Conditions: 150 mM KOAc, 10 mM MgCl2 and 150 mM bicine (pH 8.5), 24 C. Structure probing data (2A3) for a 207-nucleotide construct. 2A3 adducts were read by reverse transcription with SuperScript II with manganese. Reactivities are given for positions 27 through 156. Source: RMDB library RSTRND, as collected in RNAgym. The 2A3 profile rests on 2,050 reads.
RNA sequence: GGGAACGACUCGAGUAGAGUCGAAAAUAUAGUAGAGGUCUUGCGAAAGCUUACCACACAAGAUGGACCGGAGCGAAAGCUCCAAUAUCUAGUGUACCCUCGCUGACUAUGUGAUCUUAUUAAAAUUAGGUUAAAUCGAGGUUAAAAAUAGUUUUAAGUAUAUCUUAAGCUUCGGCUUAAGAUAUACAAAAGAAACAACAACAACAAC
Reactivity to 2A3 in 0.01 (KOAc 150mM, MgCl2 10mM, bicine 150mM(pH8.5), 24C), signal-to-noise 3, nucleotides 027 to 156: u180a010u090a020g080u060a040g040a040g140g000u000c020u060u050g000c000g030a100a010a010g000c010u040u010a010c000c000a000c020a000c000a000a000g000a000u010g010g010a040c130c140g000g000a000g010c010g020a080a020a010g000c000u010c000c000a000a000u040a000u020c000u010a020g000u000g010u030a040c010c000c010u040c020g000c070u040g020a050c040u050a060u180g080u070g040a040u020c010u050u150a110u090u210a190a080a160a120u110u090a010g000g050u030u030a030a100a050u130c010g000a010g000g000u120u110a010a110a010a030a010u120a050g010u050u050u050u060a150a040